[RMDB]
The record gives the reactivity of an RNA of 177 nucleotides to DMS and 2A3. The 2A3 profile rests on 2,481 reads. Conditions: 150 mM KOAc, 10 mM MgCl2 and 150 mM bicine (pH 8.5), 24 C. Reactivities are given for positions 27 through 126. 2A3 adducts were read by reverse transcription with SuperScript II with manganese. DMS adducts were read by reverse transcription with MarathonRT.
RNA sequence: GGGAACGACUCGAGUAGAGUCGAAAACUUCUUUCCGCUUAUAAGAUUGCCGUUAACUGAGGACUUAAGUGUUGCAGUAAGAGUCUUGGUCUUUGCGCUUGCCUUAUAAGUCUUUGAUGAGCUAGUGAGCUCGUAAUACGUUCGCGUAUUACGAGCUAAAAGAAACAACAACAACAAC
Reactivity to DMS in 0.01 (KOAc 150mM, MgCl2 10mM, bicine 150mM(pH8.5), 24C), signal-to-noise 2, nucleotides 027 to 126: c070u000u010c080u000u000u000c040c010g000c040u020u020a020u060a010a040g000a110u000u000g030c020c020g060u010u020a070a030c010u010g010a060g000g010a010c020u000u000a080a130g000u020g000u000u070g010c090a120g000u000a030a160g030a100g010u010c030u010u000g000g000u000c050u000u020u000g040c130g000c020u000u000g050c100c020u020u000a030u000a020a010g000u000c040u020u010u030g010a070u000g030a090g000c010u000a100g020u010g000
Reactivity to 2A3 in 0.01 (KOAc 150mM, MgCl2 10mM, bicine 150mM(pH8.5), 24C), signal-to-noise 5, nucleotides 027 to 126: c020u060u020c000u060u050u010c010c030g010c050u050u040a050u000a130a080g020a120u130u030g070c080c010g060u090u050a070a060c020u050g080a030g010g040a010c010u040u080a070a130g090u110g140u300u210g080c110a080g070u090a150a040g080a020g070u020c000u010u020g020g010u040c040u040u060u110g040c040g000c000u020u100g090c020c010u030u020a060u010a070a000g010u000c000u040u030u060g190a220u030g010a000g040c060u020a060g180u040g260